[RMDB]
RNA sequence: GGGAACGACUCGAGUAGAGUCGAAAAGUAUCUCGCGUCGUAACGGGAAGGACAUCUAAUCAUGAGCGAGAACUACACUCCACGUCUGAAGACCCGCUACCGCGAAGAGAUCCGCACCAAGCUCAACGAUGAGUUCUCCUACGAGAACGUCAUGCAAUAAUGGUCGGUAUUUCGAUACCGACCAUUAAAAAGAAACAACAACAACAAC
Reactivity to 2A3 in 0.01 (KOAc 150mM, MgCl2 10mM, bicine 150mM(pH8.5), 24C), signal-to-noise 3, nucleotides 027 to 156: g010u020a070u030c010u010c010g000c020g000u140c040g010u020a050a010c000g000g040g050a070a000g010g020a000c010a040u040c100u260a300a170u190c090a140u220g030a010g050c140g030a050g040a090a000c030u170a030c030a010c010u000c000c030a080c090g000u010c010u050g050a090a030g080a070c020c000c010g000c010u000a000c000c020g000c000g010a100a080g010a010g010a050u040c040c040g090c060a030c070c030a040a050g030c020u040c130a040a130c090g060a020u010g000a020g010u000u000c000u000c000c030u170a120c170g000a020g000a000a000c000g090u030c010a020u050g060c000a020a180
Reactivity to DMS in 0.01 (KOAc 150mM, MgCl2 10mM, bicine 150mM(pH8.5), 24C), signal-to-noise 1, nucleotides 027 to 156: g050u000a060u000c020u000c010g030c020g100u010c160g050u020a110a050c050g040g070g070a160a270g050g000a100c080a060u000c040u000a070a230u000c120a190u020g010a030g010c130g020a080g020a100a240c060u000a150c030a080c030u000c030c060a050c020g030u000c010u010g030a070a170g020a290c000c000c060g020c000u000a040c020c020g000c010g000a000a050g010a120g000a090u000c000c060g000c040a290c240c040a110a230g020c030u000c010a000a070c030g030a080u010g000a010g040u000u000c000u000c000c100u000a140c120g000a000g030a090a070c000g000u000c010a030u020g000c010a060a180
The data come from the RNA Mapping Database (RMDB), library OK3TST.
An RNA of 207 nucleotides, treated with 2A3 and DMS and read out base by base.
2A3 adducts were read by reverse transcription with SuperScript II with manganese.
Reactivities are rounded to 0.1 and cut off at 0 and 3.